[RMDB]
RNA sequence: GGGAACGACUCGAGUAGAGUCGAAAAAACUACGGCGCAAACAUUACCCUUAUAUUUGUACCAUAGUUCAAAAAUAGAAGCGUUAGAAGUAAUUAAUUUCGAUGUUACUACGCCUAUUUCUUGGAAUUGGUUAAACCAACUAAUAACGCUACAUUCAAGUCAUUUCAUAAUUCGUUAUGAAAUGACUAAAAGAAACAACAACAACAAC
Reactivity to 2A3 in 0.01 (KOAc 150mM, MgCl2 10mM, bicine 150mM(pH8.5), 24C), signal-to-noise 4, nucleotides 027 to 156: a010a010c080u110a040c040g020g000c020g000c040a040a030a060c030a120u120u140a190c040c020c020u150u020a180u020a060u170u100u010g030u020a030c010c000a030u040a030g060u030u050c030a040a030a010a020a010u060a030g100a240a040g020c020g030u060u070a050g070a170a000g080u030a000a030u080u100a030a080u070u160u150c110g030a030u120g010u030u010a030c010u010a010c010g000c000c000u030a020u010u040u020c090u010u050g030g030a040a040u060u020g020g000u040u100a060a050a060c030c010a040a030c040u080a050a070u080a100a020c030g020c030u070a040c040a160u100u230c070a060
Reactivity to DMS in 0.01 (KOAc 150mM, MgCl2 10mM, bicine 150mM(pH8.5), 24C), signal-to-noise 1, nucleotides 027 to 156: a050a050c010u000a000c000g000g020c020g000c000a060a010a040c020a060u000u000a110c190c110c110u010u000a140u000a060u000u010u040g000u000a000c030c000a050u000a020g000u010u000c030a060a050a040a090a100u000a050g010a120a160g020c020g030u000u000a070g010a140a130g010u000a020a030u000u010a090a090u000u000u000c060g000a110u000g040u000u000a080c000u010a030c040g040c040c060u010a080u000u000u010c040u000u020g010g010a030a130u000u000g020g050u000u000a030a050a140c070c030a000a060c050u000a040a050u000a030a020c030g000c030u020a080c080a090u000u000c030a050